About this RNA
Source: RMDB library RNAMAK, as collected in RNAgym. An RNA of 207 nucleotides, treated with 2A3 and DMS and read out base by base.
RNA sequence: GGGAACGACUCGAGUAGAGUCGAAAAGGGGUCUUACCUAAGCUUCGAACUACGUCGACGAAGGACUGAAGCCUCCACGGUCCAGAGACGCGAAGCGAUGGUAAGACGGAGGCACCCAAAAGGGAUUAAUAAUUGGUUCGCCAAUUAUUAAUCCCAAUGUUUUAUAUCUAUUCGUAGAUAUAAAACAAAAAGAAACAACAACAACAAC
Reactivity to 2A3 in 0.01 (KOAc 150mM, MgCl2 10mM, bicine 150mM(pH8.5), 24C), signal-to-noise 2, nucleotides 027 to 156: g000g000g020g000u010c010u000u000a010c020c010u100a200a030g000c010u010u010c010g110a220a160c110u150a110c260g000u040c000g070a300c030g020a160a050g020g000a010c010u030g040a080a010g010c010c000u030c010c010a020c000g000g010u000c010c000a010g010a000g000a040c030g010c020g140a010a000g020c030g010a010u160g000g010u000a000a000g000a000c000g000g010a010g010g000c030a030c010c000c000a030a100a030a040g000g010g010a010u010u000a000a000u000a010a000u000u000g020g000u040u110c150g030c070c000a000a000u000u000a010u000u000a000a000u000c000c000c000a000a000
Reactivity to DMS in 0.01 (KOAc 150mM, MgCl2 10mM, bicine 150mM(pH8.5), 24C), signal-to-noise 2, nucleotides 027 to 156: g000g030g050g020u000c000u030u010a010c010c010u010a170a300g000c020u000u000c000g010a100a270c070u010a070c090g000u000c010g000a300c130g010a210a140g000g010a040c020u000g000a030a190g000c010c010u010c010c020a280c050g000g010u000c010c010a080g030a300g020a000c000g000c000g020a030a050g060c020g000a150u000g000g010u000a010a010g010a040c010g040g010a100g020g000c000a150c020c000c000a080a090a110a160g030g010g010a030u000u000a000a030u000a000a010u000u000g020g000u010u010c300g040c050c000a020a020u000u000a000u010u010a000a010u010c010c000c000a000a000
About this RNA:
2A3 is a SHAPE reagent: it acylates the 2'-hydroxyl of flexible nucleotides of all four kinds. For DMS, 2,402 sequencing reads were counted. For DMS the reverse transcriptase was MarathonRT.